Source: RMDB library OK1LIB, as collected in RNAgym. Chemical mapping of a 177-nucleotide RNA with 2A3.

[RMDB]
RNA sequence: GGGAACGACUCGAGUAGAGUCGAAAAAUUACUAUCCUUAGGAAGAGUUACAUUCGAUUUGAUAAUAUUCUUUCUUGAAAUUUUUCUUUUUUUCUGUUUCGUAUUAUCAUCAAGAUCAAGGCUGUAAGAGUGCUAGCUAUUUCGAUAGCUAGCACUCAAAAGAAACAACAACAACAAC
Reactivity to 2A3 in 0.01 (KOAc 150mM, MgCl2 10mM, bicine 150mM(pH8.5), 24C), signal-to-noise 1, nucleotides 027 to 126: a000u080u040a010c070u070a060u090c010c000u000u000a000g130g000a000a010g100a020g060u070u100a070c040a130u030u060c020g070a110u040u000u190g070a100u060a050a000u040a120u020u000c060u000u000u240c000u000u060g120a140a200a240u160u110u030u060u030c040u000u120u000u090u000u060u040c070u000g140u000u040u040c040g010u010a000u060u050a000u120c060a000u000c100a120a020g000a040u010c060a050a000g010g000c010u100g070u170a040a000
Overview
Conditions: 150 mM KOAc, 10 mM MgCl2 and 150 mM bicine (pH 8.5), 24 C.